[RMDB]
Structure probing data (DMS and 2A3) for a 177-nucleotide construct.
For DMS, 667 sequencing reads were counted.
For 2A3 the reverse transcriptase was SuperScript II with manganese.

RNA sequence: GGGAACGACUCGAGUAGAGUCGAAAACACAUCAAGGUCGGUAGUCGGUUCAUCGGCGAUGAUAAACGGUGAUUCGCACAGCACCGCCAUCGCAAUCAUCAUGCGCUGCAACAUACCGCCACUCAUCCUCACUAGGUCGUUUCGACGACCUAGUGAGAAAAGAAACAACAACAACAAC
Reactivity to DMS in 0.01 (KOAc 150mM, MgCl2 10mM, bicine 150mM(pH8.5), 24C), signal-to-noise 1, nucleotides 027 to 126: c140a240c130a080u010c130a030a100g020g010u020c050g040g000u000a000g000u000c040g060g020u000u020c060a000u000c110g010g000c010g000a000u000g000a030u010a110a130a150c020g000g000u010g020a030u000u000c070g020c090a100c200a150g000c000a010c010c000g030c040c000a020u000c030g000c010a160a110u000c000a130u020c250a020u020g000c050g010c000u000g000c100a060a030c020a130u000a020c020c020g000c000c020a120c220u020c130a080u000c140
Reactivity to 2A3 in 0.01 (KOAc 150mM, MgCl2 10mM, bicine 150mM(pH8.5), 24C), signal-to-noise 3, nucleotides 027 to 126: c080a010c000a080u170c120a120a070g050g060u220c030g010g010u020a000g060u040c000g020g050u040u050c010a020u030c070g070g000c050g000a010u020g020a020u090a010a170a010c000g000g030u020g020a140u200u180c070g000c080a060c040a130g060c000a020c010c000g070c000c000a010u030c000g000c060a050a180u200c030a070u060c010a030u100g020c020g000c000u020g000c030a040a020c010a070u040a010c000c000g000c040c010a050c020u030c010a120u060c000